[RMDB]
RNA sequence: GGGAACGACUCGAGUAGAGUCGAAAAAGGUAGGAGGAUCGCUUGAGCCCAGGAGUUCUGGGCUGCAGUGUGCUCUGCCAUUCGGGUAUCUGCACCAAGUUCAGCAACAAUAUGGUGAACUCCCAGGAGCCUUAGCAGGAUUCGUCCUGCUAAGGCUAAAAGAAACAACAACAACAAC
Reactivity to 2A3 in 0.01 (KOAc 150mM, MgCl2 10mM, bicine 150mM(pH8.5), 24C), signal-to-noise 1, nucleotides 027 to 126: a000g100g020u090a050g000g160a040g010g070a080u130c000g010c030u040u130g050a000g000c020c000c000a010g000g080a220g130u300u120c010u010g010g000g000c000u000g000c000a000g010u000g010u000g140c000u010c010u000g010c000c020a030u060u100c030g070g000g000u080a120u090c050u120g010c020a010c010c010a050a000g000u060u050c050a050g090c000a020a060c030a150a070u110a120u210g040g060u030g020a000a000c010u020c020c030c000a020g120g060
Reactivity to DMS in 0.01 (KOAc 150mM, MgCl2 10mM, bicine 150mM(pH8.5), 24C), signal-to-noise 1, nucleotides 027 to 126: a070g010g000u010a050g060g000a070g040g000a100u010c050g010c020u010u000g010a050g010c000c000c000a030g000g010a130g000u020u010c000u030g060g000g010c000u000g030c030a040g020u000g030u000g010c000u010c000u010g000c030c010a150u000u010c110g020g010g000u000a040u000c060u010g000c110a120c020c070a070a060g010u000u000c020a040g000c020a050a050c080a060a080u010a110u000g030g010u000g010a030a040c060u010c010c010c030a100g000g010

Annotation:
This 177-nucleotide RNA was probed chemically with 2A3 and DMS. The 2A3 profile rests on 1,119 reads. DMS adducts were read by reverse transcription with MarathonRT. DMS (dimethyl sulfate) methylates the pairing face of unpaired adenines and cytosines. Conditions: 150 mM KOAc, 10 mM MgCl2 and 150 mM bicine (pH 8.5), 24 C.